[RMDB]
RNA sequence: GGGAACGACUCGAGUAGAGUCGAAAACAUCGCCACCGUAGUAGACCCUACCGCAUUCAAAACGAAAUAUGACUCUAACGGUGGUUGUGGGCUAUCUUGUACGGCCAAAGUAUUAACCGACGGAGAAUAUAUGUCUGACCAACUCCAUGUUGAGUCGACUGACAUCCUCUUUCGAGAGGAUGUCAGUAAAAGAAACAACAACAACAAC
Reactivity to 2A3 in 0.01 (KOAc 150mM, MgCl2 10mM, bicine 150mM(pH8.5), 24C), signal-to-noise 1, nucleotides 027 to 156: c030a050u090c060g010c010c010a000c000c000g030u040a030g050u030a050g100a110c070c000c020u010a090c100c120g010c090a130u160u180c060a110a070a080a070c030g050a000a000a000u110a040u050g010a030c060u000c010u070a090a050c020g010g010u000g040g000u010u070g000u110g040g020g030c020u020a030u100c030u070u170g090u200a100c040g020g000c000c010a070a050a000g040u060a080u060u060a120a030c020c000g020a070c070g090g020a060g050a110a000u200a000u020a070u140g010u000c090u170g030a040c000c000a030a020c020u150c080c120a040u200g010u000u000g000a110g000u000c000g000